RNA sequence: GGGAACGACUCGAGUAGAGUCGAAAACGUAGUAAUCGCGCGAAAAUCACGUGAAAUAAUCAGAGGAAUCGUUUGAAAUCAUCGUAGUAAUCGCGCGAAAAUCACGUGAAAUAAUCAGAGGAAUCGUUGUAAGUAGUGCAUUCGUGCACUACUUACAAAAAGAAACAACAACAACAAC
Reactivity to 2A3 in 0.01 (KOAc 150mM, MgCl2 10mM, bicine 150mM(pH8.5), 24C), signal-to-noise 3, nucleotides 027 to 126: c000g000u030a000g000u020a000a090u030c000g010c000g000c000g040a020a000a000a080u030c000a000c000g040u000g040a010a010a070u220a050a030u050c070a070g020a050g080g190a100a200u090c040g090u030u030u040g100a080a050a000u010c040a010u100c010g000u000a080g000u000a130a010u000c000g000c000g020c000g020a000a000a000a000u050c000a000c050g010u050g020a000a010a040u300a000a090u140c080a050g050a040g090g110a020a040u070c030g030u000
Reactivity to DMS in 0.01 (KOAc 150mM, MgCl2 10mM, bicine 150mM(pH8.5), 24C), signal-to-noise 3, nucleotides 027 to 126: c020g010u000a090g030u010a080a190u000c010g000c000g010c000g000a020a090a160a060u010c040a020c000g040u000g000a040a110a060u050a100a080u030c030a180g000a020g000g140a120a080u020c090g000u020u000u040g010a050a090a110u000c020a030u050c010g000u000a070g010u000a060a270u010c000g020c010g020c000g000a030a010a030a110u030c050a000c000g020u000g030a060a030a100u020a160a090u020c110a080g020a030g000g000a130a110u000c100g010u030
Chemical mapping of a 177-nucleotide RNA with 2A3 and DMS. The data come from the RNA Mapping Database (RMDB), libraries RFM100 and RFMREP. Values are in units of 0.01, from 0 to 300, in steps of 10. 2A3 adducts were read by reverse transcription with SuperScript II with manganese. The reactions ran in a buffer of 150 mM KOAc, 10 mM MgCl2 and 150 mM bicine (pH 8.5), at 24 C.